[RMDB]
RNA sequence: GGGAACGACUCGAGUAGAGUCGAAAAGGUGCAUCAUGUCCAGCAAACCCAGAAGAGUUUAAGAGCCACAACCCGAGAAGUAGGGAUCUACUUUGAAAUUAUCAUUCCAGCAGCCAUUUAUACCCAGAGACAUGUCUCCGUUCGCGGAGACAUGUCUAAAAGAAACAACAACAACAAC
Reactivity to 2A3 in 0.01 (KOAc 150mM, MgCl2 10mM, bicine 150mM(pH8.5), 24C), signal-to-noise 1, nucleotides 027 to 126: g020g030u070g020c000a060u000c000a030u220g100u000c000c100a080g000c070a050a050a050c000c000c000a000g030a100a040g020a030g000u000u100u060a140a040g050a020g040c050c000a030c020a000a150c010c060c120g050a000g030a100a000g040u010a000g000g010g000a040u040c010u040a000c000u060u000u030g090a100a100a070u090u100a120u150c020a140u260u090c030c000a000g050c070a000g040c040c000a010u000u140u040a070u040a000c000c010c000a040g020

Annotation: The record gives the reactivity of an RNA of 177 nucleotides to 2A3. The 2A3 profile rests on 408 reads. Conditions: 150 mM KOAc, 10 mM MgCl2 and 150 mM bicine (pH 8.5), 24 C.